[RMDB]
RNA sequence: GGGAACGACUCGAGUAGAGUCGAAAAGAUAUGGAUUAGCGACAUGGUGAGCGACUAUAGCUCGGAAACGAGCUACGAAUCGCCCCAACAGCGCUAAUCCUAAGUCAAACUCAGCUUCGGCUGAGAACGUCUCAUGCUAGUUCGCUAGCAUGAGACGAAAAGAAACAACAACAACAAC
Reactivity to DMS in 0.01 (KOAc 150mM, MgCl2 10mM, bicine 150mM(pH8.5), 24C), signal-to-noise 1, nucleotides 027 to 126: g010a000u000a300u000g050g000a010u000u000a010g000c010g010a150c150a110u000g000g000u000g020a180g070c000g040a010c050u030a080u000a020g010c000u000c000g000g000a060a050a080c010g000a010g000c080u000a000c190g000a020a160u000c000g010c000c020c000c000a010a050c260a240g040c000g010c000u000a000a000u000c000c000u030a050a080g000u000c020a160a070a210c000u000c000a000g000c000u000u020c140g040g000c000u000g000a000g000a020a050
Reactivity to 2A3 in 0.01 (KOAc 150mM, MgCl2 10mM, bicine 150mM(pH8.5), 24C), signal-to-noise 2, nucleotides 027 to 126: g000a020u120a050u110g000g000a000u030u000a000g000c010g170a210c090a100u100g000g000u210g070a300g050c010g020a000c030u060a000u040a030g000c000u040c020g000g020a040a060a030c020g000a000g000c000u000a000c010g090a090a280u020c000g020c000c000c000c020a070a050c100a050g070c010g000c010u020a020a000u000c000c000u010a090a000g000u000c040a020a020a080c010u040c010a020g010c000u100u140c300g210g000c000u000g000a000g010a040a050

Structure probing data (DMS and 2A3) for a 177-nucleotide construct. For DMS, 739 sequencing reads were counted. Reactivities are given for positions 27 through 126.